[RMDB]
This 177-nucleotide RNA was probed chemically with 2A3 and DMS. For 2A3 the reverse transcriptase was SuperScript II with manganese. For 2A3, 10,574 sequencing reads were counted.
RNA sequence: GGGAACGACUCGAGUAGAGUCGAAAAGUUUACCCAUUCAUGUGGGGAGGAGCCUACUGCUUCUGCGACACUGAAAACACCCAGAUGAGCGAGGCGUAUGUAGAGCGCUCGGAAGAGUGCUCUAUUGCGUACUAGGAUACUUCGGUAUCCUAGUACGAAAAGAAACAACAACAACAAC
Reactivity to 2A3 in 0.01 (KOAc 150mM, MgCl2 10mM, bicine 150mM(pH8.5), 24C), signal-to-noise 9, nucleotides 027 to 126: g030u060u090u200a180c020c020c010a030u180u230c150a080u270g050u060g050g020g020g030a060g050g060a030g040c020c040u110a110c050u170g030c010u030u030c030u160g030c020g080a090c030a020c050u060g060a050a030a070a060c050a050c010c050c000a030g070a210u090g030a010g030c010g010a020g040g000c040g020u070a100u200g010u000a010g000a000g010c000g000c000u000c000g000g040a090a030g010a010g000u000g000c000u010c000u000a010u010u050g010
Reactivity to DMS in 0.01 (KOAc 150mM, MgCl2 10mM, bicine 150mM(pH8.5), 24C), signal-to-noise 6, nucleotides 027 to 126: g000u020u020u030a150c010c010c010a110u020u030c090a040u020g000u000g000g000g010g010a050g000g010a090g030c010c230u020a080c140u030g000c020u010u000c020u020g020c030g010a140c110a030c050u000g000a060a050a110a130c180a130c120c060c020a060g000a040u000g000a260g000c010g000a050g000g000c040g000u000a030u030g020u000a000g000a010g000c000g030c010u000c000g000g090a130a100g010a010g020u000g000c000u000c000u000a000u000u010g010